[RMDB]
RNA sequence: GGGAACGACUCGAGUAGAGUCGAAAAGGGUACGACCCGUGGGUCGACCAGGUGUUGGCCGGCCAUCCUGGUGUCCAGGCGGUCGAUGCCUACUCGCUGCUCGGCGCCGUGGGCGACGACGACGCGCGAAAUAGUCUGGAUUCGUCCAGACUAUUUCAAAAGAAACAACAACAACAAC
Reactivity to DMS in 0.01 (KOAc 150mM, MgCl2 10mM, bicine 150mM(pH8.5), 24C), signal-to-noise 7, nucleotides 027 to 126: g010g000g010u000a070c030g000a080c010c010c030g010u000g010g010g020u000c010g010a020c070c000a020g000g020u000g010u000u000g000g020c000c020g010g010c060c010a090u020c010c010u000g000g000u010g000u010c040c000a040g010g030c300g010g010u000c010g000a110u010g020c010c010u010a050c040u000c030g010c020u000g000c250u000c020g020g000c010g010c010c010g020u000g000g010g000c020g000a040c020g000a070c020g010a070c090g010c130g020c150
Reactivity to 2A3 in 0.01 (KOAc 150mM, MgCl2 10mM, bicine 150mM(pH8.5), 24C), signal-to-noise 4, nucleotides 027 to 126: g060g010g010u080a050c030g070a210c020c010c010g020u060g020g010g000u020c020g020a010c010c000a010g000g030u050g010u060u050g010g000c000c000g030g000c020c010a120u180c010c010u020g030g020u210g120u140c070c010a020g000g030c030g020g020u010c000g000a080u130g000c000c000u000a020c010u010c010g210c030u030g010c020u000c020g010g000c050g220c010c010g050u080g030g030g000c010g010a040c010g010a010c020g040a040c040g030c020g000c030